[RMDB]
RNA sequence: GGGAACGACUCGAGUAGAGUCGAAAAAAUAUAACAGUAUGCUUGCAAUAAAUGUUGGGUGCCUCUACUAUAACACAAAAACCAUAGGGAAUUCUGUUAAGAAAAGAGCAUUAUCCCCAAGGGUAAGAUUGUAAGUUCAGUUCGCUGAACUUACAAUAAAAGAAACAACAACAACAAC
Reactivity to DMS in 0.01 (KOAc 150mM, MgCl2 10mM, bicine 150mM(pH8.5), 24C), signal-to-noise 2, nucleotides 027 to 126: a040a050u030a110u010a040a080c050a030g000u000a020u000g020c010u010u010g000c040a050a050u000a070a130a100u000g010u000u010g020g000g020u000g010c070c040u010c020u010a070c080u020a110u010a070a020c050a060c070a060a070a080a110a080c010c010a090u000a180g050g040g010a030a110u000u000c100u010g010u000u000a020a090g010a050a090a040a070g000a080g020c030a020u010u000a050u010c000c000c000c110a040a110g000g020g020u000a080a040g000
This 177-nucleotide RNA was probed chemically with DMS.
For DMS the reverse transcriptase was MarathonRT.
The DMS profile rests on 988 reads.
In probing experiments dimethyl sulfate is read out at A N1 and C N3, which are open when not base-paired.
The reactions ran in a buffer of 150 mM KOAc, 10 mM MgCl2 and 150 mM bicine (pH 8.5), at 24 C.